Chemical mapping of a 207-nucleotide RNA with 2A3 and DMS.
The DMS profile rests on 2,684 reads.
For 2A3, 1,370 sequencing reads were counted.
The reactions ran in a buffer of 150 mM KOAc, 10 mM MgCl2 and 150 mM bicine (pH 8.5), at 24 C.
[RMDB]
RNA sequence: GGGAACGACUCGAGUAGAGUCGAAAAGCGUACUACUCCGUUUGACGUUAAAGACAUGAGCUACCAUACGCUAUCCCAAAUAGGAUAGCGUUAAGUAGCUCAACAGCUUUAACCGAGGAGUAUCGCAAACCCUCUCACACUUCGGUGUGAGAGGGAACAGGGUUAGAUUCUUCGGAAUCUAACCCUGAAAAGAAACAACAACAACAAC
Reactivity to 2A3 in 0.01 (KOAc 150mM, MgCl2 10mM, bicine 150mM(pH8.5), 24C), signal-to-noise 2, nucleotides 027 to 156: g010c010g090u160a080c120u010a000c000u040c000c000g050u040u120u300g110a060c040g000u000u000a020a010a030g030a040c050a170u070g010a000g000c000u000a000c010c020a040u020a180c000g000c000u000a000u040c030c000c030a180a230a110u290a070g000g000a000u000a010g010c000g000u000u000a000a000g010u000a000g000c000u000c000a000a010c000a000g020c000u000u000u000a000a010c000c000g010a040g000g010a020g000u010a020u070c000g000c000a050a100a300c000c020c000u020c000u000c000a010c000a000c000u080u150c300g060g010u010g000u000g010a000g000a000g000g000g000a000a000
Reactivity to DMS in 0.01 (KOAc 150mM, MgCl2 10mM, bicine 150mM(pH8.5), 24C), signal-to-noise 1, nucleotides 027 to 156: g010c000g030u030a070c070u000a010c000u000c020c010g010u030u000u040g010a140c130g030u000u000a000a030a000g030a030c020a300u000g010a020g020c010u000a000c000c000a270u000a010c000g020c010u000a010u000c010c030c020a080a130a230u000a060g030g000a040u000a000g020c000g040u010u000a000a060g040u010a030g020c010u000c010a010a010c060a090g030c000u000u000u000a010a020c010c000g000a110g060g040a040g000u000a000u000c010g030c000a080a080a040c020c000c030u000c000u000c000a000c000a000c010u000u010c300g120g060u000g070u010g000a000g030a000g010g000g010a020a020
The data come from the RNA Mapping Database (RMDB), library RNAMAK.